[RMDB]
RNA sequence: GGGAACGACUCGAGUAGAGUCGAAAAGCCUUACGAUUCGUCGUAAGGCAUACAAAGUUUUGGCACUAUGUGCCCGCAGCGUUGGUGCUCCCACGCGGUGCAAUACGACGGAUUUCGAUCCGUCGAAAUGGGGGGAAAGAUUCGUCUUUCCCCCCAUAAAAGAAACAACAACAACAAC
Reactivity to DMS in 0.01 (KOAc 150mM, MgCl2 10mM, bicine 150mM(pH8.5), 24C), signal-to-noise 3, nucleotides 027 to 126: g000c000c010u000u010a010c010g010a010u000u030c220g030u000c000g000u000a000a000g000g000c010a010u000a030c140a100a120a090g000u000u000u020u020g010g010c010a030c010u000a140u000g000u000g020c000c020c140g020c020a050g000c000g010u000u000g040g010u010g000c220u000c090c010c000a050c050g010c010g000g040u000g010c080a150a090u000a170c020g030a020c000g000g000a030u000u000u010c210g000a020u000c000c000g040u010c010g000a000a040
Reactivity to 2A3 in 0.01 (KOAc 150mM, MgCl2 10mM, bicine 150mM(pH8.5), 24C), signal-to-noise 2, nucleotides 027 to 126: g000c000c000u010u010a000c020g020a000u010u040c210g030u000c000g000u170a000a000g020g010c000a000u020a000c020a000a150a050g010u090u100u190u140g010g010c020a010c000u190a110u300g010u000g000c000c000c000g000c010a080g010c030g050u140u230g070g020u140g050c050u060c050c000c000a000c000g000c000g000g020u060g030c010a010a090u170a140c020g010a000c000g000g000a000u060u070u060c040g040a020u000c000c010g000u000c010g000a020a000